Structure probing data (2A3) for a 207-nucleotide construct. The RNA was probed in 150 mM KOAc, 10 mM MgCl2 and 150 mM bicine (pH 8.5) at 24 C. Values cover nucleotides 27 to 156.
RNA sequence: GGGAACGACUCGAGUAGAGUCGAAAAAGAUCGAUUACGAUCGAUCAAUGAUGCCCCUCACCCACCUCUGAAGAUCCCAGGUGGGCGAGGGAACGGAGCACGGGAUCAAGAGCAGUACGCUGCUCGAAAAAGAACUAGACCUUCGGGUCUAGUUCAAGGUACCAGUGAUGUUCGCAUCACUGGUACCAAAAGAAACAACAACAACAAC
Reactivity to 2A3 in 0.01 (KOAc 150mM, MgCl2 10mM, bicine 150mM(pH8.5), 24C), signal-to-noise 1, nucleotides 027 to 156: a000g000a000u000c000g000a000u060u080a040c150g050a020u000c000g000a000u000c000a000a080u100g190a070u150g050c000c000c000c030u050c020a040c000c000c010a010c000c010u050c020u070g060a030a030g010a040u000c010c000c000a010g000g010u010g020g000g000c030g000a000g000g000g020a020a020c110g050g030a040g050c170a040c130g020g000g000a000u000c020a030a010g000a000g000c000a000g000u050a020c270g020c190u000g000c010u000c010g020a000a030a010a010a010g000a000a000c000u000a000g000a000c000c000u060u080c300g080g000g000u000c000u000a000g000u000u000c000a000a020